[RMDB]
The record gives the reactivity of an RNA of 177 nucleotides to 2A3 and DMS. 2A3 adducts were read by reverse transcription with SuperScript II with manganese. For DMS the reverse transcriptase was MarathonRT.
RNA sequence: GGGAACGACUCGAGUAGAGUCGAAAAGAAAAAGCGGAAGUGGCGAAAUCGGUAGACGCAGUUGAUCAAAGAUCAACCGUAGAAAUACGUGCUGGUUCGAGUCCAGCCUUCCCCACCGAAAAAAAAAGAUGAAACAUAACUUCGGUUAUGUUUCAUCAAAAGAAACAACAACAACAAC
Reactivity to 2A3 in 0.01 (KOAc 150mM, MgCl2 10mM, bicine 150mM(pH8.5), 24C), signal-to-noise 2, nucleotides 027 to 126: g030a010a060a010a000a000g030c050g020g000a020a000g000u010g030g000c020g020a020a000a020u230c090g160g090u070a010g000a010c010g000c030a000g000u000u000g010a020u030c120a300a210a160g030a010u010c000a000a020c000c000g000u000a000g040a020a050a000u030a010c010g020u020g010c000u010g020g000u000u010c010g000a000g000u010c000c000a000g030c000c000u010u010c000c030c010c000a030c030c000g130a160a040a000a000a000a000a000a000a010
Reactivity to DMS in 0.01 (KOAc 150mM, MgCl2 10mM, bicine 150mM(pH8.5), 24C), signal-to-noise 4, nucleotides 027 to 126: g000a150a080a040a120a100g000c300g000g000a020a040g030u000g000g000c010g000a020a020a020u010c160g050g000u020a000g000a280c020g000c020a120g010u000u000g000a010u000c020a140a110a200g000a020u000c000a010a010c020c000g000u000a000g000a110a080a110u000a020c030g000u000g000c000u000g010g000u000u000c020g000a300g010u000c000c000a000g010c010c000u000u000c000c000c030c130a130c030c020g010a000a000a000a030a000a030a070a130a150

The RNA was probed in 150 mM KOAc, 10 mM MgCl2 and 150 mM bicine (pH 8.5) at 24 C. Source: RMDB library M2PK90, as collected in RNAgym.